[RMDB]
RNA sequence: GGGAACGACUCGAGUAGAGUCGAAAAGGAUGCACCUGAGGUUUGGUCAGCCAUCGAGCUGACACAGUCAGGAGCCCAGCAUGCAGCGAAGGAGCAUCUAAGCCUACGAGAGCAGAGUCAGAAUGGGUGAUUAACGACUGUUCGCAGUCGUUAAUCAAAAAGAAACAACAACAACAAC
Reactivity to 2A3 in 0.01 (KOAc 150mM, MgCl2 10mM, bicine 150mM(pH8.5), 24C), signal-to-noise 2, nucleotides 027 to 126: g020g000a060u060g020c010a010c040c000u020g040a030g030g090u140u210u290g010g010u010c000a000g020c030c030a280u300c150g030a060g030c000u000g000a000c020a000c000a010g060u000c020a000g000g000a010g000c000c000c000a040g010c020a000u170g000c060a000g010c030g020a080a020g060g020a080g000c000a020u000c000u040a100a030g040c000c000u070a110c040g030a020g010a020g090c030a020g030a070g090u050c020a020g090a090a110u120g080g000g030
Reactivity to DMS in 0.01 (KOAc 150mM, MgCl2 10mM, bicine 150mM(pH8.5), 24C), signal-to-noise 3, nucleotides 027 to 126: g030g010a090u000g010c040a270c010c000u010g020a040g010g000u010u000u000g020g020u000c000a020g020c010c020a150u030c300g000a130g030c000u000g000a010c000a050c040a100g000u000c020a020g000g000a200g000c010c020c010a110g010c050a070u000g000c100a070g010c040g020a060a090g000g000a100g010c020a040u000c010u000a050a140g030c050c010u000a040c080g000a100g000a070g010c000a040g000a080g020u010c020a010g010a090a070u000g010g000g010